[RMDB]
RNA sequence: GGGAACGACUCGAGUAGAGUCGAAAAGAUCCCCUUCGGGGGAUCAAAAAGCGUACUACUACUUAAGAUCCACCCAUCUAUAAUCGGUUCCCAAAUAGGAACCGGUAGAUGGUGGAUCUAAGUGUAGUAUCGCAAAAAACACACCUUCGGGUGUGAAGGUAUUAAUCAGUUUCGACUGAUUAAUACCAAAAGAAACAACAACAACAAC
Reactivity to 2A3 in 0.01 (KOAc 150mM, MgCl2 10mM, bicine 150mM(pH8.5), 24C), signal-to-noise 3, nucleotides 027 to 156: g000a000u000c010c010c010c000u020u040c120g160g000g000g030g040a010u010c010a000a030a000a000a000g000c000g000u000a010c010u000a000c010u020a010c000u050u000a230a020g000a000u010c010c010a020c110c060c020a010u000c010u040a090u100a230a300u200c000g000g000u000u010c040c010c060a230a300a070u230a070g010g000a000a000c000c000g000g000u000a000g000a000u010g000g000u010g000g000a000u000c000u000a000a000g000u000g000u000a000g000u000a000u080c010g000c000a100a060a000a000a040a000c010a000c000a000c020c010u030u050c260g150g000g000u010g000u010g010a020a060
Reactivity to DMS in 0.01 (KOAc 150mM, MgCl2 10mM, bicine 150mM(pH8.5), 24C), signal-to-noise 1, nucleotides 027 to 156: g020a010u000c000c000c000c000u000u000c300g050g020g020g040g000a000u010c010a020a040a110a120a110g010c010g070u000a010c010u000a020c000u000a020c010u000u000a060a090g020a020u010c000c000a040c120c040c080a010u000c010u040a040u000a220a050u000c000g020g040u010u010c000c000c050a050a150a260u000a100g020g000a020a000c010c000g010g020u000a020g010a000u000g000g130u010g020g000a000u000c010u000a000a000g010u000g020u000a000g010u010a000u000c040g070c020a000a000a090a120a070a180c020a000c000a020c000c010u000u000c300g090g040g010u000g020u000g010a050a100

The record gives the reactivity of an RNA of 207 nucleotides to 2A3 and DMS. 2A3 adducts were read by reverse transcription with SuperScript II with manganese. For 2A3, 3,724 sequencing reads were counted. The DMS profile rests on 2,804 reads. Conditions: 150 mM KOAc, 10 mM MgCl2 and 150 mM bicine (pH 8.5), 24 C.